Chemical mapping of a 170-nucleotide RNA with 2A3 and DMS. DMS adducts were read by reverse transcription with MarathonRT. Values cover nucleotides 27 to 129. The 2A3 profile rests on 4,272 reads.
[RMDB]
RNA sequence: GGGAACGACUCGAGUAGAGUCGAAAAUAUUGUUGGGUGCACCCUGGGACCCAGUAAUACCCGGGGGGAGGCGGGGUUAACCCAUACUAUGGGAACUGCUGGGUUCCUCGGAUGUCGAUCCCCUCUCGUAUCUAGUCCUUCGGGACUAGAAAAAGAAACAACAACAACAAC
Reactivity to 2A3 in 0.01 (KOAc 150mM, MgCl2 10mM, bicine 150mM(pH8.5), 24C), signal-to-noise 2, nucleotides 027 to 129: u160a020u090u110g030u030u040g000g020g040u090g010c020a090c010c000c000u000g000g000g000a020c000c000c000a000g010u010a000a010u060a060c000c000c010g000g020g010g020g020g000a050g000g060c060g000g000g000g020u000u070a060a050c000c000c010a010u100a150c140u100a160u110g010g000g060a040a010c040u030g000c010u000g030g020g000u000u030c030c000u010c000g030g020a100u050g010u020c010g040a020u010c000c000c000c000u020c000u000c040g000u000a080
Reactivity to DMS in 0.01 (KOAc 150mM, MgCl2 10mM, bicine 150mM(pH8.5), 24C), signal-to-noise 1, nucleotides 027 to 129: u040a110u060u000g020u050u040g000g020g020u000g020c000a000c030c000c070u050g000g000g000a010c030c010c010a060g020u040a000a010u030a270c040c000c020g000g000g000g000g000g000a080g000g030c040g000g010g010g020u050u030a090a120c000c000c000a000u000a110c160u040a050u000g030g030g030a070a050c030u010g040c020u050g000g020g060u000u030c020c000u010c070g040g030a040u000g010u020c060g020a170u010c030c010c000c060u020c040u000c060g000u020a100